The record gives the reactivity of an RNA of 207 nucleotides to 2A3 and DMS.
RNA sequence: GGGAACGACUCGAGUAGAGUCGAAAAGGAGAAGGUUCAGAGACUAAAUGGCAGUGGGCAAGCAUGGCAAUGCUUGCUUAAGAUAUAGUCCGUCCCAGCUGAGAAGCUGCCUAUGAGAGGAAUGCCGUAAGGCAGGAGAGCUAAUAGGAAGUAAGUGCAAGAGACAUGUGUUCGCACAUGUCUCUUGAAAAGAAACAACAACAACAAC
Reactivity to 2A3 in 0.01 (KOAc 150mM, MgCl2 10mM, bicine 150mM(pH8.5), 24C), signal-to-noise 2, nucleotides 027 to 156: g040g010a050g030a030a000g060g020u020u120c080a040g070a030g010a120c030u090a070a060a150u140g010g000c030a020g010u080g060g000g010c000a000a000g010c000a020u050g120g060c140a130a040u020g000c000u000u000g000c000u000u040a020a010g020a030u070a010u030a110g020u000c020c040g030u070c000c010c000a010g000c020u040g020a050g040a090a030g020c030u030g010c000c000u050a140u060g180a110g000a000g000g040a000a060u080g000c000c000g020u040a020a050g010g000c000a000g030g010a030g000a000g000c000u010a020a030u030a060g030g060a020a020g020u090a020a090g010u060g060
Reactivity to DMS in 0.01 (KOAc 150mM, MgCl2 10mM, bicine 150mM(pH8.5), 24C), signal-to-noise 2, nucleotides 027 to 156: g040g000a140g030a050a030g000g020u010u010c070a160g020a260g000a060c050u000a020a100a110u000g010g060c060a060g040u010g000g000g000c010a050a010g020c020a030u010g010g020c290a070a230u000g010c000u000u000g010c000u000u000a010a090g020a070u000a150u000a090g010u010c060c050g020u000c010c010c010a100g000c010u000g000a190g000a080a110g010c030u000g000c000c040u000a040u000g000a220g020a110g010g000a180a120u000g040c030c030g000u010a070a140g030g010c010a060g000g000a150g000a040g020c040u000a020a020u000a090g020g000a040a020g040u000a010a060g000u000g010
The DMS profile rests on 3,606 reads. It was measured as part of the RMDB library ARCHII. The RNA was probed in 150 mM KOAc, 10 mM MgCl2 and 150 mM bicine (pH 8.5) at 24 C. For 2A3, 1,257 sequencing reads were counted. Reactivities are given for positions 27 through 156.